[RMDB]
RNA sequence: GGGAACGACUCGAGUAGAGUCGAAAAGCCCUGGGCUCCAGGAACAGCAGUGGAGGCCAUCGGGGAGGGUCCCGCUGCUGGUCCUGGUGGGGAGGCUGAGCACGUCCUGCUGCUCUGGGCUCUCCUGCCCCCAAAUUGACUUCGGUCAAUUUGGGGGAAAAGAAACAACAACAACAAC
Reactivity to 2A3 in 0.01 (KOAc 150mM, MgCl2 10mM, bicine 150mM(pH8.5), 24C), signal-to-noise 1, nucleotides 027 to 126: g020c020c000c000u040g010g040g030c000u030c020c000a000g010g010a030a020c000a010g050c000a000g000u010g020g050a170g040g090c000c000a080u210c120g060g010g000g020a070g030g040g010u000c000c000c000g020c000u020g000c010u010g000g010u010c000c000u000g000g000u000g010g010g000g010a010g030g000c070u090g040a050g030c070a040c060g130u160c020c080u150g030c110u020g000c000u010c050u020g050g030g040c020u010c000u000c020c000u030g030